[RMDB]
Source: RMDB library OK2TST, as collected in RNAgym.
The record gives the reactivity of an RNA of 177 nucleotides to DMS and 2A3.
Reactivities are given for positions 27 through 126.
The RNA was probed in 150 mM KOAc, 10 mM MgCl2 and 150 mM bicine (pH 8.5) at 24 C.
For 2A3 the reverse transcriptase was SuperScript II with manganese.
RNA sequence: GGGAACGACUCGAGUAGAGUCGAAAAAGCGCCACGUCCAGACGCAUGUUGUCGGCGCGAACCAGUGGCUGGCUUGCGCCCUGGGCGGUGAGAGACAUUCGCCCGGAGAGGAUACUAAGCUGCGGCACACCGCAGCGUACUUCGGUACGCUGCGGUGAAAAGAAACAACAACAACAAC
Reactivity to DMS in 0.01 (KOAc 150mM, MgCl2 10mM, bicine 150mM(pH8.5), 24C), signal-to-noise 3, nucleotides 027 to 126: a120g020c050g010c000c020a070c090g020u010c010c020a060g010a070c060g000c050a070u010g010u000u000g000u000c080g020g040c010g020c020g000a040a030c020c030a080g030u000g020g020c040u000g020g000c020u000u000g020c010g020c030c030c000u000g000g000g010c000g010g010u010g000a240g010a170g000a130c060a040u010u000c030g010c000c000c000g000g010a110g000a120g000g000a100u000a060c100u010a090a110g000c050u000g000c060g000g000c110a230
Reactivity to 2A3 in 0.01 (KOAc 150mM, MgCl2 10mM, bicine 150mM(pH8.5), 24C), signal-to-noise 1, nucleotides 027 to 126: a000g060c010g000c000c010a040c020g040u070c050c000a040g000a110c060g070c100a080u100g040u190u120g090u220c060g020g000c000g020c000g020a040a050c000c000a090g060u030g300g020c090u020g000g050c030u030u050g000c040g050c020c060c030u040g010g000g000c040g000g040u030g000a190g000a010g020a030c020a040u240u200c110g030c000c040c050g000g010a120g000a020g030g000a020u040a080c010u000a050a080g060c000u020g020c060g050g000c060a000